[RMDB]
RNA sequence: GGGAACGACUCGAGUAGAGUCGAAAAUUUUGAUAAAGGGAAGAACAUAUUAGGACUGAGAAGAUAAAAAGAGCCUAAAUGUGGAAGAAGACCACCAACCCAGUCCCCCAAGUCAACUUAAAAGGACAAAGCCACAGGGCAUGGUGGCUCAUGCCUGUCAUCUGUGUAAAUUCGUUUACACAGAUGAAAAAGAAACAACAACAACAAC
Reactivity to 2A3 in 0.01 (KOAc 150mM, MgCl2 10mM, bicine 150mM(pH8.5), 24C), signal-to-noise 1, nucleotides 027 to 156: u020u020u030u110g030a010u090a020a140a050g060g020g000a000a040g010a090a050c020a010u140a190u090u000a000g030g020a000c030u070g020a010g030a160a050g020a070u270a140a180a050a030a020g060a030g020c010c000u010a020a050a080u160g010u020g000g000a000a060g000a060a000g030a060c020c020a020c030c010a010a020c000c050c000a000g140u010c010c030c020c000c030a020a020g030u030c040a030a050c030u090u180a110a090a050a000g040g000a010c040a040a060a000g020c010c010a060c020a030g020g030g000c020a010u040g010g020u060g010g030c010u000c000a010u030g000c000c000u000g000
Reactivity to DMS in 0.01 (KOAc 150mM, MgCl2 10mM, bicine 150mM(pH8.5), 24C), signal-to-noise 2, nucleotides 027 to 156: u000u000u000u000g010a110u010a050a130a040g030g010g020a090a150g010a070a050c050a020u000a110u010u000a070g010g010a130c030u000g020a160g010a100a140g020a140u010a020a090a100a120a130g000a110g010c060c030u000a010a070a030u000g040u010g000g010a100a140g000a180a070g010a040c020c000a060c010c010a070a100c010c010c010a100g030u000c030c000c000c000c000a050a300g000u000c020a060a070c050u000u010a050a100a140a050g000g030a070c020a030a060a040g010c030c050a070c020a090g000g000g020c040a050u000g000g030u000g030g030c020u000c060a050u000g000c000c000u020g020